[RMDB]
RNA sequence: GGGAACGACUCGAGUAGAGUCGAAAAUUAAAGGAGGAGGAGAAAUAUAGCGAGAGAUCGGUCCUCCCACGCGCGUCUCGCGCUGAUAAGAGGAAUAAGAGGAUGAUUAAUAGAUAGCGCGCAAAAACAAAUUCAUAUUCUUCGGAAUAUGAAUUUGAAAAGAAACAACAACAACAAC
Reactivity to DMS in 0.01 (KOAc 150mM, MgCl2 10mM, bicine 150mM(pH8.5), 24C), signal-to-noise 4, nucleotides 027 to 126: u000u010a050a110a130g000g000a070g010g010a040g000g000a060g000a100a110a100u000a080u010a080g010c030g010a040g000a090g000a040u000c040g010g000u000c010c020u000c010c030c040a070c140g000c020g010c020g010u010c060u010c050g010c010g020c030u000g000a070u000a080a090g000a040g000g000a060a080u010a060a110g010a050g010g000a050u000g010a100u010u000a080a100u000a070g010a090u000a060g010c020g010c020g030c140a030a060a070a050a090
Reactivity to 2A3 in 0.01 (KOAc 150mM, MgCl2 10mM, bicine 150mM(pH8.5), 24C), signal-to-noise 3, nucleotides 027 to 126: u090u030a060a020a040g040g020a040g000g030a000g030g000a040g080a050a120a010u230a050u130a090g050c030g000a040g010a000g000a060u050c040g020g050u020c020c000u000c000c000c000a010c010g000c000g030c010g130u070c050u090c100g010c010g000c050u020g010a030u050a130a070g030a050g070g010a070a070u110a120a040g020a020g080g000a040u040g030a040u030u190a120a100u060a140g080a080u070a040g000c020g000c020g000c040a020a100a000a000a000
Conditions: 150 mM KOAc, 10 mM MgCl2 and 150 mM bicine (pH 8.5), 24 C. Structure probing data (DMS and 2A3) for a 177-nucleotide construct. In probing experiments dimethyl sulfate is read out at A N1 and C N3, which are open when not base-paired. For 2A3 the reverse transcriptase was SuperScript II with manganese. DMS adducts were read by reverse transcription with MarathonRT.